[RMDB]
RNA sequence: GGGAACGACUCGAGUAGAGUCGAAAAGGAUGGGCGUCAGCCGCCCGUCGCGGAUAUAUUCCUUCACUUCAAACAGCGGCUUGUUGAUGAUGCCGCGCCCGCCGAGCGCCCAUUGCGUCAACACAUAGCAGUAUCCCUGAUUCGUCAGGGAUACUGCAAAAGAAACAACAACAACAAC
Reactivity to DMS in 0.01 (KOAc 150mM, MgCl2 10mM, bicine 150mM(pH8.5), 24C), signal-to-noise 1, nucleotides 027 to 126: g040g000a000u000g010g020g000c000g010u030c280a160g030c230c020g000c020c000c040g010u000c040g000c070g000g010a080u000a100u020a180u000u000c020c020u000u000c120a050c070u020u000c090a090a130a130c190a130g050c020g000g020c040u010u000g010u010u010g010a110u020g000a110u020g000c020c030g020c060g030c050c000c020g000c000c060g000a070g000c020g000c020c020c070a120u000u000g020c040g030u000c040a030a030c030a080c260a130u010a090